Chemical mapping of a 177-nucleotide RNA with DMS and 2A3. The DMS profile rests on 1,360 reads.

RNA sequence: GGGAACGACUCGAGUAGAGUCGAAAAGUUGGCACUUGACCCAGGUUGGGGAAAGGCCCUUGGAUACAUGCUGGUUUCACCAACCAUCUGUGGGUUGGGUUUGGCCUGGACCCAUGUACCCCAGGAGGUUCGCCUACAAGUUCGCUUGUAGGCGAACAAAAGAAACAACAACAACAAC
Reactivity to DMS in 0.01 (KOAc 150mM, MgCl2 10mM, bicine 150mM(pH8.5), 24C), signal-to-noise 1, nucleotides 027 to 126: g030u050u000g010g040c080a060c020u000u000g020a300c000c010c010a090g000g020u010u010g000g000g000g010a100a070a070g030g010c030c020c030u020u010g000g020a190u010a070c030a030u000g000c200u000g020g010u010u000u000c050a050c020c020a020a010c000c010a100u000c170u010g000u010g030g020g000u000u000g000g000g010u010u020u000g010g050c000c070u000g000g010a100c050c040c000a010u030g010u000a070c060c010c010c030a040g010g020a160g000
Reactivity to 2A3 in 0.01 (KOAc 150mM, MgCl2 10mM, bicine 150mM(pH8.5), 24C), signal-to-noise 1, nucleotides 027 to 126: g050u080u070g030g000c060a070c300u020u010g040a020c070c000c050a150g200g230u160u100g070g010g020g060a020a000a030g000g040c000c000c000u030u030g080g020a020u030a030c020a000u060g020c120u060g080g040u080u240u100c000a010c010c000a010a010c010c000a020u080c120u160g270u300g070g020g060u050u000g020g030g040u000u100u180g070g000c000c000u020g010g020a000c080c000c000a000u080g040u050a040c000c000c010c000a030g020g100a070g070